[RMDB]
RNA sequence: GGGAACGACUCGAGUAGAGUCGAAAAUCGCGAGCCGCACCAUUUCCUGCCGCCUGGGCGGUAUUGGCAGCAGCAAGCAGAUCCUCAUUGCUCAUGUCGUGAAGACUGAUUUUCUGCCAGGCCGCCAAUGUGAUAGAUAAUUCGUUAUCUAUCACAUAAAAGAAACAACAACAACAAC
Reactivity to 2A3 in 0.01 (KOAc 150mM, MgCl2 10mM, bicine 150mM(pH8.5), 24C), signal-to-noise 9, nucleotides 027 to 126: u090c020g000c030g040a020g030c020c010g010c030a040c030c020a050u040u040u030c000c010u020g050c010c020g050c010c030u110g060g010g000c040g010g000u140a300u070u060g000g000c000a010g000c020a000g030c020a080a030g000c010a010g040a210u020c010c000u020c020a040u060u190g010c020u100c160a170u290g060u140c020g010u030g060a030a010g010a020c000u010g040a060u060u060u050u020c000u000g000c000c000a010g020g000c000c000g000c000c000a010
Reactivity to DMS in 0.01 (KOAc 150mM, MgCl2 10mM, bicine 150mM(pH8.5), 24C), signal-to-noise 9, nucleotides 027 to 126: u010c070g020c040g010a100g020c020c030g020c060a090c050c030a100u000u000u000c030c020u000g020c050c050g010c060c060u000g010g010g020c000g010g010u000a040u010u000g010g010c010a020g010c300a060g010c190a040a060g010c020a020g000a130u000c010c020u000c020a040u000u000g020c020u010c210a120u010g020u000c040g020u010g000a040a050g000a040c010u000g000a070u000u000u010u000c010u000g000c000c010a050g010g000c000c000g010c010c020a060